[RMDB]
RNA sequence: GGGAACGACUCGAGUAGAGUCGAAAAGGCACUUCGGUGCCACGAUUACCUUUGUGCAAUGAGGGUCUGCAAGACGUAGAGCGCCCAUUGGGCGUGAUACGUUGAUGACCAGACCUCCCCACCAUUGCACUCUGGUGGUGUAACCAUUCGUGGUUAAACCACUAAGUUGUUUCGACAACUUAGUGGUAAAAGAAACAACAACAACAAC
Reactivity to DMS in 0.01 (KOAc 150mM, MgCl2 10mM, bicine 150mM(pH8.5), 24C), signal-to-noise 4, nucleotides 027 to 156: g020g000c000a020c020u000u000c280g060g020u000g030c000c010a000c020g010a090u000u000a010c010c010u000u000u000g020u000g020c000a020a030u000g010a300g000g000g000u010c000u000g000c010a120a230g010a010c010g020u000a000g010a300g000c030g000c000c000c010a300u000u010g070g030g010c000g030u000g000a300u000a010c000g020u000u010g000a000u000g000a150c300c030a030g020a040c020c030u010c250c140c040c020a300c160c010a040u000u000g000c010a010c010u000c030u010g020g040u000g020g010u000g000u000a070a080c010c010a090u000u000c100g020u010g030g010u000u000a080a120
Reactivity to 2A3 in 0.01 (KOAc 150mM, MgCl2 10mM, bicine 150mM(pH8.5), 24C), signal-to-noise 7, nucleotides 027 to 156: g010g000c010a000c030u070u140c300g110g000u020g000c010c000a010c010g080a070u110u120a020c000c000u010u010u010g010u000g000c010a000a000u010g000a050g030g000g000u000c000u010g010c030a090a190g010a000c000g000u000a010g000a010g000c000g020c010c000c100a250u250u300g010g000g000c000g010u030g000a010u000a000c010g000u000u010g020a040u060g040a060c090c000a000g000a000c000c000u090c060c010c010c010a050c010c000a000u000u000g000c000a020c000u000c000u000g000g010u010g010g040u090g040u040a020a020c000c010a020u070u090c210g110u060g040g020u100u120a130a070

The record gives the reactivity of an RNA of 207 nucleotides to DMS and 2A3.
For 2A3, 9,286 sequencing reads were counted.
For 2A3 the reverse transcriptase was SuperScript II with manganese.
It was measured as part of the RMDB library RNAMAK.
The RNA was probed in 150 mM KOAc, 10 mM MgCl2 and 150 mM bicine (pH 8.5) at 24 C.